[RMDB]
RNA sequence: GGGAACGACUCGAGUAGAGUCGAAAACUGAGCGACGAUCCGCGGGCCCGCGAGCCGGCUGUUGUCAUAGACGGUGGCGCCGUCGGCCAGCGUGAUGGCCUGGGCGACAAGCUCGGCCAGCCGGCGGCAAUUAACCCCACUUCGGUGGGGUUAAUUGAAAAGAAACAACAACAACAAC
Reactivity to 2A3 in 0.01 (KOAc 150mM, MgCl2 10mM, bicine 150mM(pH8.5), 24C), signal-to-noise 6, nucleotides 027 to 126: c040u070g040a030g070c040g130a120c050g050a080u060c010c010g020c030g030g000g000c020c020c030g030c030g030a030g020c000c000g020g010c010u010g000u160u220g000u010c010a050u060a110g140a070c110g110g020u030g010g010c040g000c010c010g000u020c000g000g000c010c010a040g010c040g080u180g080a110u090g010g000c000c040u090g000g010g010c020g050a140c090a120a000g000c010u010c010g000g010c010c000a010g010c000c010g050g000c000g000g000
Reactivity to DMS in 0.01 (KOAc 150mM, MgCl2 10mM, bicine 150mM(pH8.5), 24C), signal-to-noise 7, nucleotides 027 to 126: c020u000g000a090g000c070g010a110c090g000a060u030c020c020g020c030g000g010g000c020c150c050g000c090g010a300g020c000c010g000g000c020u000g010u020u020g030u010c030a050u030a110g020a080c210g010g020u010g010g010c030g020c010c020g000u000c040g010g000c010c080a190g010c100g010u040g020a140u010g010g010c000c010u040g030g000g010c010g020a110c160a090a160g000c010u000c040g000g000c010c010a080g000c000c010g010g020c000g010g000
Source: RMDB library OK1LIB, as collected in RNAgym.
An RNA of 177 nucleotides, treated with 2A3 and DMS and read out base by base.
For 2A3 the reverse transcriptase was SuperScript II with manganese.
The DMS profile rests on 19,291 reads.
Conditions: 150 mM KOAc, 10 mM MgCl2 and 150 mM bicine (pH 8.5), 24 C.
Reactivities are given for positions 27 through 126.
The 2A3 profile rests on 6,821 reads.